The record gives the reactivity of an RNA of 177 nucleotides to 2A3 and DMS. High 2A3 reactivity points to a flexible backbone, as in loops and unpaired stretches.

[RMDB]
RNA sequence: GGGAACGACUCGAGUAGAGUCGAAAACUGGCCGACCCUGAUCUUCUGUGAAGGGUUCGAGUUGGAGCACGCCUGUCGGGACCCGAAAGAUGGUGAACUAUGCCUGAGCGGGGCGAAGCCAGAGGAAAUUCUGUAGUAUUUUCGAAUACUACAGAAUAAAAGAAACAACAACAACAAC
Reactivity to 2A3 in 0.01 (KOAc 150mM, MgCl2 10mM, bicine 150mM(pH8.5), 24C), signal-to-noise 9, nucleotides 027 to 126: c000u010g020g000c020c010g060a180c010c010c000u020g030a060u040c070u230u050c100u300g130u060g070a070a030g010g000g010u010u020c010g000a020g020u090u080g020g010a050g050c050a010c090g080c010c010u050g050u070c030g020g020g040a040c010c000c000g040a080a090a020g090a040u110g000g010u080g030a080a050c070u110a110u300g030c000c020u030g010a030g030c030g010g000g010g000c020g010a030a010g000c000c010a010g030a040g040g080a050a170
Reactivity to DMS in 0.01 (KOAc 150mM, MgCl2 10mM, bicine 150mM(pH8.5), 24C), signal-to-noise 9, nucleotides 027 to 126: c010u000g010g010c020c010g010a120c030c000c000u000g000a150u010c010u020u020c180u040g020u010g010a280a090g010g000g000u000u010c020g010a110g020u010u010g000g000a160g010c090a080c100g010c010c020u000g010u000c040g010g010g000a100c020c010c020g010a070a090a090g010a100u020g000g000u000g010a100a120c160u020a090u030g010c010c010u000g000a110g010c040g010g000g000g000c030g000a100a140g000c010c010a020g010a170g010g000a090a090
DMS (dimethyl sulfate) methylates the pairing face of unpaired adenines and cytosines. For 2A3 the reverse transcriptase was SuperScript II with manganese. Reactivities are given for positions 27 through 126. The reactions ran in a buffer of 150 mM KOAc, 10 mM MgCl2 and 150 mM bicine (pH 8.5), at 24 C.